Source: RMDB library OK3TST, as collected in RNAgym. This 207-nucleotide RNA was probed chemically with 2A3 and DMS. The 2A3 profile rests on 5,571 reads. Values cover nucleotides 27 to 156. The reactions ran in a buffer of 150 mM KOAc, 10 mM MgCl2 and 150 mM bicine (pH 8.5), at 24 C.

RNA sequence: GGGAACGACUCGAGUAGAGUCGAAAAGACACUUUCUUGCCAACUCAGCCUCCCAAAGUGCUGGUAUUACAGGCAUGAGCCACCAUGCCUGGCCAUGAAAGUACCAAAUUUUGAGAAGAAAGAGCAAAUUAGUGGUUGAGCUCCCACUACCUGCUAAGGUAUAAAUUAGUUUCGACUAAUUUAUACCAAAAGAAACAACAACAACAAC
Reactivity to 2A3 in 0.01 (KOAc 150mM, MgCl2 10mM, bicine 150mM(pH8.5), 24C), signal-to-noise 5, nucleotides 027 to 156: g060a000c020a000c070u010u060u010c020u020u060g030c020c000a070a040c100u050c100a020g020c000c020u070c020c030c010a040a060a010g090u120g030c040u000g020g010u040a070u080u200a080c060a000g000g000c000a000u010g000a000g060c030c030a040c000c000a000u000g000c000c000u010g010g010c030c020a080u140g030a060a030a010g010u020a030c010c020a030a080a100u120u180u110u130g100a110g020a130a030g060a070a070a020g060a010g010c010a030a050a170u080u050a080g020u020g020g000u020u050g020a010g020c010u040c010c010c000a040c020u070a060c010c040u100g060c030u150a100a100
Reactivity to DMS in 0.01 (KOAc 150mM, MgCl2 10mM, bicine 150mM(pH8.5), 24C), signal-to-noise 2, nucleotides 027 to 156: g000a070c040a010c030u000u010u000c060u000u000g030c000c000a090a080c020u010c060a130g010c010c030u000c040c000c010a010a070a060g010u010g020c090u040g010g040u010a040u000u010a100c000a040g020g030c000a020u000g010a280g010c100c050a100c100c020a030u000g000c000c010u000g000g020c060c050a080u010g000a100a100a170g000u000a070c000c000a040a040a060u000u010u010u000g010a100g000a060a060g020a110a110a130g010a120g000c020a040a080a080u000u010a080g020u010g000g010u000u000g000a110g020c050u000c040c000c000a080c080u010a080c090c030u010g000c040u010a120a190